[RMDB]
RNA sequence: GGGAACGACUCGAGUAGAGUCGAAAAACACUACCUUCGGGUAGUGUCUUACCUCCUAAGUCGAAGUAUCUCCCGAUCGUUGAUCGUAUCGGAAACGAUACGGGAGGUUGGGAGCCGAGCUUCGAUAUGGAAGCAGUUAAGGGCUUCGGCCCUUAAACACCAUCCUCUUGUUCGCAAGAGGAUGGUGAAAAGAAACAACAACAACAAC
Reactivity to 2A3 in 0.01 (KOAc 150mM, MgCl2 10mM, bicine 150mM(pH8.5), 24C), signal-to-noise 1, nucleotides 027 to 156: a000c010a000c000u000a000c000c000u030u090c220g120g000g000u000a000g000u000g000u020c000u010u110a080c000c010u030c010c000u050a140a040g040u000c000g010a000a000g000u020a100u060c000u000c000c000c000g000a010u030c010g040u160u010g010a010u000c020g000u000a000u000c000g000g130a070a040a050c010g010a000u000a000c010g000g000g000a010g000g050u000u000g010g010g000a020g000c010c030g120a050g020c010u000u000c010g000a000u010a010u020g020g020a070a070g100c060a010g040u070u060a000a000g010g020g000c000u030u090c220g060g010c010c010c000u000u010a020a010a000